[RMDB]
RNA sequence: GGGAACGACUCGAGUAGAGUCGAAAAGUCCGGCAAGGUCGGCGCGCCAACGCUCGAGGUGUUGCGCACAGCCGUAUCGAAGCGCUGGUCGGCCAAUUCCGAUUUGAUCGAUGCGAUCGAACACGUGGUGCCGGCUAUAAUUCGUUAUAGCCGGCACAAAAGAAACAACAACAACAAC
Reactivity to 2A3 in 0.01 (KOAc 150mM, MgCl2 10mM, bicine 150mM(pH8.5), 24C), signal-to-noise 1, nucleotides 027 to 126: g010u010c000c010g030g000c070a070a020g040g000u060c010g020g000c030g000c050g010c060c030a040a010c040g020c010u110c100g120a120g060g200u080g020u040u100g010c060g050c030a000c000a040g000c000c010g020u040a050u110c010g020a060a020g110c050g030c090u020g000g040u030c040g000g030c020c000a020a060u180u130c070c000g020a000u000u010u080g070a050u000c050g070a050u210g200c080g040a040u060c020g000a000a020c090a010c250g090u180g010
Reactivity to DMS in 0.01 (KOAc 150mM, MgCl2 10mM, bicine 150mM(pH8.5), 24C), signal-to-noise 1, nucleotides 027 to 126: g020u010c060c000g020g010c110a110a120g030g000u020c000g030g000c040g040c120g000c060c020a020a020c030g030c000u000c160g020a120g000g030u000g010u010u000g000c210g000c040a090c130a140g020c040c010g000u010a030u010c020g000a070a110g010c150g000c020u000g010g000u000c000g030g000c040c020a050a170u000u000c080c020g000a180u000u010u020g000a040u000c010g000a130u020g000c120g000a010u000c050g000a020a030c110a150c120g020u010g050
The record gives the reactivity of an RNA of 177 nucleotides to 2A3 and DMS. Source: RMDB library OK2TRN, as collected in RNAgym. The RNA was probed in 150 mM KOAc, 10 mM MgCl2 and 150 mM bicine (pH 8.5) at 24 C.